[RMDB]
RNA sequence: GGGAACGACUCGAGUAGAGUCGAAAAGAUUCGGCGGCCCUGUCAUGAGGCCGAAACGAAGGCACGUACCCCUUCGAAUGGCGUCGGGGAGUCAGCGGCUAUAUAUGCGCCUGAUGCUGGCAUCCGGGAGAACCCUCAUCCUUCGGGAUGAGGGUAAGUGUACCCACUGAUUCGUCAGUGGGUACACAAAAGAAACAACAACAACAAC
Reactivity to 2A3 in 0.01 (KOAc 150mM, MgCl2 10mM, bicine 150mM(pH8.5), 24C), signal-to-noise 1, nucleotides 027 to 156: g040a100u220u140c070g020g010c050g000g000c030c000c000u000g110u090c040a070u040g060a000g000g020c000c030g040a060a000a000c010g000a000a020g010g020c080a020c180g090u190a090c050c060c000c000u000u000c000g000a000a060u090g000g000c060g180u080c020g030g000g000g000a080g010u030c000a000g000c060g000g000c080u030a000u020a060u040a010u300g080c080g000c020c000u060g070a090u140g020c020u000g000g000c000a060u010c000c010g060g020g000a150g090a030a090c000c000c000u000c000a000u010c000c000u040u060c150g090g000g000a000u000g000a000g000g000g000u000a000a000
An RNA of 207 nucleotides, treated with 2A3 and read out base by base.
The data come from the RNA Mapping Database (RMDB), library M2RFPK.
The 2A3 profile rests on 468 reads.